[RMDB]
Chemical mapping of a 177-nucleotide RNA with 2A3 and DMS. 2A3 adducts were read by reverse transcription with SuperScript II with manganese. Conditions: 150 mM KOAc, 10 mM MgCl2 and 150 mM bicine (pH 8.5), 24 C. For 2A3, 3,616 sequencing reads were counted. Source: RMDB library OK1LIB, as collected in RNAgym.
RNA sequence: GGGAACGACUCGAGUAGAGUCGAAAAUGUUCGCUUGGUCCAUCGAAAUCAUUAUGUACCAUUAAAUGAAGAGACGACAAUUUUGUUAUCAGGAACUAUAGCCUUUGAUGCUGCAACAUUUGAAAUAAUGACUUGUGUUUUUCGAAACACAAGUCAUAAAAGAAACAACAACAACAAC
Reactivity to 2A3 in 0.01 (KOAc 150mM, MgCl2 10mM, bicine 150mM(pH8.5), 24C), signal-to-noise 5, nucleotides 027 to 126: u070g010u020u030c020g000c080u050u170g030g000u000c040c010a020u060c090g090a070a070a060u090c040a020u030u140a090u100g120u130a110c050c030a070u110u160a130a100a110u100g030a070a030g080a020g020a070c070g030a030c120a100a150u110u120u140u090g030u020u060a050u080c030a020g000g030a040a020c030u040a060u110a170g050c000c000u050u040u190g040a060u080g030c070u010g000c010a020a020c010a050u000u040u150g110a080a080a020u220a080
Reactivity to DMS in 0.01 (KOAc 150mM, MgCl2 10mM, bicine 150mM(pH8.5), 24C), signal-to-noise 3, nucleotides 027 to 126: u020g030u000u000c060g000c050u000u030g000g030u010c040c030a120u030c060g000a060a060a060u030c030a090u030u030a040u020g000u020a100c180c040a100u010u020a030a120a050u030g020a060a060g000a120g070a030c080g000a020c080a050a150u010u020u000u000g040u000u030a060u000c030a090g000g000a030a080c110u040a070u010a180g010c080c060u010u000u010g000a040u020g000c040u010g000c060a030a010c090a030u020u010u010g010a100a030a090u000a060